[RMDB]
RNA sequence: GGGAACGACUCGAGUAGAGUCGAAAAAGAAGCCAAGAUUGAUGACUUAUCGCAGCUUGCACAAGAGGAGCGUUUAAGCGUUAUAGAGGAUAUGGUAAAGUCGGCCAAUCAAGAUACUAAGCGCAAAUUAGAUUCGAACGCCACAGGGCUUAUAGACCUAAACCCGGUAAUUCGUUACCGGGUUUAGAAAAGAAACAACAACAACAAC
Reactivity to 2A3 in 0.01 (KOAc 150mM, MgCl2 10mM, bicine 150mM(pH8.5), 24C), signal-to-noise 2, nucleotides 027 to 156: a000g040a010a000g060c020c020a050a050g020a040u030u110g050a030u090g020a100c030u030u140a030u120c020g000c090a040g000c040u040u110g050c060a060c060a050a110g040a060g110g070a100g050c010g000u000u050u100a060a010g000c000g000u080u060a100u100a140g040a010g050g040a030u020a110u200g050g020u060a040a070a060g040u050c010g030g050c000c000a020a020u010c010a060a040g050a080u090a090c060u040a010a010g000c010g000c070a000a120a160u160u070a090g040a210u060u050c010g010a020a010c000g000c000c050a040c000a040g060g000g000c000u010u030a050u120a150g060a010c030
Reactivity to DMS in 0.01 (KOAc 150mM, MgCl2 10mM, bicine 150mM(pH8.5), 24C), signal-to-noise 2, nucleotides 027 to 156: a050g020a040a070g010c020c020a040a110g000a210u000u030g020a080u000g010a080c020u010u000a100u000c050g000c090a100g060c020u000u010g000c060a130c000a060a130g030a160g000g020a130g010c020g000u000u000u010a030a300g010c020g000u000u010a150u000a110g020a140g020g000a080u000a080u000g030g020u000a020a030a050g030u010c080g010g000c020c000a030a050u000c040a070a090g000a140u000a090c060u000a020a090g000c060g010c050a040a040a120u000u000a090g010a240u000u000c080g020a050a050c050g020c000c030a040c070a030g000g010g030c020u000u000a120u000a130g000a130c120

This 207-nucleotide RNA was probed chemically with 2A3 and DMS. High 2A3 reactivity points to a flexible backbone, as in loops and unpaired stretches. For DMS, 2,874 sequencing reads were counted. 2A3 adducts were read by reverse transcription with SuperScript II with manganese. For DMS the reverse transcriptase was MarathonRT. The 2A3 profile rests on 578 reads.